[RMDB]
Record summary
This 207-nucleotide RNA was probed chemically with 2A3. Conditions: 150 mM KOAc, 10 mM MgCl2 and 150 mM bicine (pH 8.5), 24 C.

RNA sequence: GGGAACGACUCGAGUAGAGUCGAAAACGUCGCACACGCAGCAACAGACCACCAACACCAUGGGUAAGAUAAUUGCUUUCCUUUUAUUCCAUCUUACAUGUAUCACAAUCACUAAACAGAGCCGGUGCACGCUUACGGUAGGUGUCUCCUCGUAUCAAGUGCCGGAUGAUUUCGAUCAUCCGGCACUAAAAGAAACAACAACAACAAC
Reactivity to 2A3 in 0.01 (KOAc 150mM, MgCl2 10mM, bicine 150mM(pH8.5), 24C), signal-to-noise 1, nucleotides 027 to 156: c030g000u020c000g010c000a000c000a000c200g030c030a000g000c010a060a070c100a080g100a040c050c000a020c000c000a000a000c000a020c050c000a020u150g030g000g000u040a000a000g000a010u060a100a190u180u160g000c000u000u030u300c060c000u120u110u000u000a160u160u000c050c000a040u070c050u090u060a060c070a130u260g000u020a010u240c010a000c000a120a030u000c020a080c150u180a220a000a070c130a030g000a000g100c000c050g040g040u130g010c020a000c020g000c000u080u000a010c000g060g030u110a000g050g000u030g000u000c000u040c040c010u020c110g040u020a030u130c050a130
The 2A3 profile rests on 416 reads. 2A3 adducts were read by reverse transcription with SuperScript II with manganese. High 2A3 reactivity points to a flexible backbone, as in loops and unpaired stretches.